Structure probing data (2A3 and DMS) for a 177-nucleotide construct. DMS adducts were read by reverse transcription with MarathonRT.
RNA sequence: GGGAACGACUCGAGUAGAGUCGAAAACGGCCGAUCGUACCAUGCGCAGUACGAGUCGUACGGUACGUACAGUAGUACGGCCUGCGAUCGCUAGUGAUCUGGCCGAUCCGGCGCGAUCGCGCAGUCAGAAUCAUCCAUACUUCGGUAUGGAUGAUUCAAAAGAAACAACAACAACAAC
Reactivity to 2A3 in 0.01 (KOAc 150mM, MgCl2 10mM, bicine 150mM(pH8.5), 24C), signal-to-noise 1, nucleotides 027 to 126: c030g010g000c000c000g020a070u080c020g010u010a020c020c020a080u110g020c020g000c040a050g060u230a100c130g070a080g130u140c000g010u010a020c080g000g010u030a070c000g010u040a030c030a110g220u290a030g040u030a080c000g010g000c000c010u020g000c010g000a000u000c010g020c030u040a040g020u040g300a010u000c050u090g150g000c050c020g000a000u000c000c010g030g020c090g000c010g030a050u030c030g000c010g000c030a010g070u060c060a030
Reactivity to DMS in 0.01 (KOAc 150mM, MgCl2 10mM, bicine 150mM(pH8.5), 24C), signal-to-noise 6, nucleotides 027 to 126: c110g010g000c010c010g010a140u010c020g000u000a010c020c020a160u010g020c040g010c060a210g000u010a090c230g020a120g020u010c010g020u000a020c080g010g000u000a040c010g020u020a050c100a210g030u010a080g010u010a150c010g020g010c000c010u000g000c010g000a010u000c000g010c010u010a090g020u020g000a000u000c000u010g010g020c290c130g000a010u000c010c000g000g040c150g010c030g000a020u000c020g010c000g010c150a060g010u000c170a090